This 177-nucleotide RNA was probed chemically with DMS and 2A3. Values are in units of 0.01, from 0 to 300, in steps of 10. For DMS, 2,091 sequencing reads were counted.

RNA sequence: GGGAACGACUCGAGUAGAGUCGAAAAGGAACUUGGUAUGAUUUCUGGAAUGGAACAAAAGUGAGCGGACCAACUUUACGCAAAUGUAAAGCGGAUAAAGAAGAAAUUCCAGUUUUCGUCCGUGGUAACGGACCAGUAGGUUCGCCUACUGGUCCGUAAAAGAAACAACAACAACAAC
Reactivity to DMS in 0.01 (KOAc 150mM, MgCl2 10mM, bicine 150mM(pH8.5), 24C), signal-to-noise 3, nucleotides 027 to 126: g010g000a080a060c060u000u010g000g050u000a050u010g010a030u000u000u000c010u010g020g010a050a020u000g000g040a150a110c100a090a060a080a090g000u010g020a110g030c040g030g000a110c020c050a090a080c020u010u000u000a020c020g010c090a050a100a130u010g000u000a020a050a040g000c080g000g020a090u020a060a110a090g000a080a080g010a210a100a040u000u000c000c020a070g010u000u000u000u000c020g030u000c000c000g010u000g010g010u000a080
Reactivity to 2A3 in 0.01 (KOAc 150mM, MgCl2 10mM, bicine 150mM(pH8.5), 24C), signal-to-noise 2, nucleotides 027 to 126: g050g010a060a030c080u130u160g040g060u300a040u070g040a030u020u030u090c000u000g000g030a010a010u020g000g020a040a040c030a100a110a030a060g180u150g100a060g010c050g020g040a010c000c000a030a080c010u020u030u050a030c020g020c090a090a090a090u200g020u090a060a010a020g000c010g010g010a100u090a130a120a030g160a060a020g010a020a060a010u040u010c020c000a020g010u010u020u000u020c000g000u000c000c000g100u070g120g030u160a040